An RNA of 177 nucleotides, treated with 2A3 and read out base by base. 2A3 adducts were read by reverse transcription with SuperScript II with manganese. Values cover nucleotides 27 to 126. Source: RMDB library RFM100, as collected in RNAgym.
[RMDB]
RNA sequence: GGGAACGACUCGAGUAGAGUCGAAAAACGCACUCAUACGUGAGUGCGAACCUUGUAUCCACGAUAUUUUGAGUUGGUCUUACGCUUUGAGAACGUAGCAAGGUAUAGUCGUAGUACGCUACGACAAUCGCCCCACGACUUUCGAGUCGUGGGGCGAAAAAGAAACAACAACAACAAC
Reactivity to 2A3 in 0.01 (KOAc 150mM, MgCl2 10mM, bicine 150mM(pH8.5), 24C), signal-to-noise 2, nucleotides 027 to 126: a000c000g000c000a000c000u000c000a000u080a050c170g110u040g040a000g000u000g010c000g000a000a000c000c000u000u000g040u010a010u070c000c000a050c040g110a240u150a300u130u010u000u020g300a300g030u040u070g050g000u040c000u030u000a000c000g000c000u020u030u000g000a030g010a000a000c000g000u000a020g000c040a000a000g000g000u060a170u140a050g030u000c000g000u000a000g010u010a000c220g000c090u000a000c000g000a000c000a000a060
Overview:
2A3 is a SHAPE reagent: it acylates the 2'-hydroxyl of flexible nucleotides of all four kinds.